Chemical mapping of a 177-nucleotide RNA with DMS and 2A3. The DMS profile rests on 2,365 reads. 2A3 is a SHAPE reagent: it acylates the 2'-hydroxyl of flexible nucleotides of all four kinds. DMS adducts were read by reverse transcription with MarathonRT. The RNA was probed in 150 mM KOAc, 10 mM MgCl2 and 150 mM bicine (pH 8.5) at 24 C.

[RMDB]
RNA sequence: GGGAACGACUCGAGUAGAGUCGAAAAGCCAUACGUUACAUAUAAACACUUCGUAUGGCGCCCAAUCAAGUGUUUAUAUGUAAGAUUGGGCACGACGGUGGACAUGCGAAAGCAUGUCCAUCGUCGAGCUCGUACAAGGCUUCGGCCUUGUACGAGCAAAAGAAACAACAACAACAAC
Reactivity to DMS in 0.01 (KOAc 150mM, MgCl2 10mM, bicine 150mM(pH8.5), 24C), signal-to-noise 1, nucleotides 027 to 126: g040c000c010a090u000a010c020g000u040u010a020c040a010u000a020u030a030a090a080c010a050c050u000u000c080g020u000a010u000g000g000c030g000c030c030c040a110a050u000c060a000a060g060u000g000u010u040u040a100u000a020u010g000u000a050a020g030a070u010u030g000g000g010c000a080c060g000a000c010g000g000u000g000g000a010c000a000u000g010c010g030a100a070a090g020c030a000u000g000u020c010c000a020u000c000g030u000c000g000a020
Reactivity to 2A3 in 0.01 (KOAc 150mM, MgCl2 10mM, bicine 150mM(pH8.5), 24C), signal-to-noise 2, nucleotides 027 to 126: g040c010c000a030u020a060c040g050u030u040a040c010a020u090a050u050a070a080a000c040a000c040u020u060c040g040u080a050u090g080g010c030g010c000c000c000a000a020u040c030a060a030g010u000g040u030u140u050a120u050a030u060g060u030a020a030g020a060u060u110g010g010g000c000a010c040g000a000c000g000g000u000g000g000a000c000a000u000g000c000g090a120a000a030g000c000a000u000g000u000c000c000a000u000c000g000u000c010g000a000